[RMDB]
An RNA of 177 nucleotides, treated with DMS and read out base by base.
The data come from the RNA Mapping Database (RMDB), library RFMREP.
For DMS the reverse transcriptase was MarathonRT.
Values cover nucleotides 27 to 126.
RNA sequence: GGGAACGACUCGAGUAGAGUCGAAAACGGGGAAAUGAUGAGGGUUCCAGAGCUGAAGCGUGAUGAAUGGUUGACACGCUGACCCCGCAAAGACUGGUGGACAAACUUCGGUUUGUCCACCAGUCAAUCAAUGUAUAAGCUUCGGCUUAUACAUUGAAAAAGAAACAACAACAACAAC
Reactivity to DMS in 0.01 (KOAc 150mM, MgCl2 10mM, bicine 150mM(pH8.5), 24C), signal-to-noise 4, nucleotides 027 to 126: c050g010g010g000g010a130a100a060u020g000a070u010g000a120g010g010g010u010u000c020c030a060g010a120g030c080u010g000a130a050g010c010g020u000g000a130u010g010a100a140u010g010g020u010u000g010a150c030a020c010g010c000u000g010a170c090c050c010c020g010c180a060a090a110g000a010c000u010g000g010u000g000g000a020c000a000a010a010c010u000u010c180g030g010u000u010u000g000u010c010c000a000c000c000a000g000u000c000a010a060